[RMDB]
RNA sequence: GGGAACGACUCGAGUAGAGUCGAAAAGGGCAAAUAGUCAAUUUUGAAAGAACUUAUUGUCAACCUCUUUCAGAUAUGAAUCUAUCUGAUUCAGAAGGGAAGAACUUGCAUCAGUAUCUCAAUUUCACCCUUAGGUCGACUUCGGUCGACCUAAGGGAAAAGAAACAACAACAACAAC
Reactivity to 2A3 in 0.01 (KOAc 150mM, MgCl2 10mM, bicine 150mM(pH8.5), 24C), signal-to-noise 2, nucleotides 027 to 126: g070g000g000c020a000a000a180u070a020g020u110c110a110a260u160u080u000u130g130a160a100a070g080a020a020c000u070u000a060u040u200g040u200c110a000a110c000c000u000c040u010u010u010c040a080g140a190u040a000u200g080a000a000u000c000u040a020u060c110u290g040a000u020u030c030a000g000a020a080g060g000g000a000a000g000a000a120c020u000u130g000c000a070u020c000a110g000u000a090u020c030u000c120a130a190u000u100u060c020a130